[RMDB]
RNA sequence: GGGAACGACUCGAGUAGAGUCGAAAAAGUAAAUUCAUUUUUUAGAGUUUCAUCAAAGAUAUGAGCGUAUCUGCUUGUCAUUUCUGGGCUUUCAUGCCCCAAAAAUUUCUGCACAAUAUGCUGGGGCUACGCUUACAAAUUUCGAUUUGUAAGCGUAAAAAGAAACAACAACAACAAC
Reactivity to 2A3 in 0.01 (KOAc 150mM, MgCl2 10mM, bicine 150mM(pH8.5), 24C), signal-to-noise 3, nucleotides 027 to 126: a000g070u080a070a000a060u100u070c060a060u030u110u110u100u200u200a100g020a010g040u000u090u140c040a050u010c040a060a130a040g070a070u080a070u170g040a010g030c020g030u040a080u060c040u040g020c020u050u090g030u040c010a040u040u010u000c050u020g040g030g000c020u120u200u120c080a040u100g020c000c000c010c030a020a010a000a050a070u000u060u060c030u040g020c030a030c020a080a060u050a030u220g010c020u000g010g010g010g020c000
Reactivity to DMS in 0.01 (KOAc 150mM, MgCl2 10mM, bicine 150mM(pH8.5), 24C), signal-to-noise 4, nucleotides 027 to 126: a110g000u010a040a040a030u000u010c020a040u000u010u020u000u000u010a180g000a050g010u010u000u010c030a080u010c060a040a080a050g000a080u000a040u000g000a050g010c030g010u000a040u000c230u000g010c020u000u010g010u000c050a040u000u010u000c060u000g010g000g010c060u000u000u010c140a080u000g010c040c000c010c010a010a020a060a050a090u000u000u000c030u000g010c040a050c150a050a060u000a200u000g010c060u000g000g000g010g020c150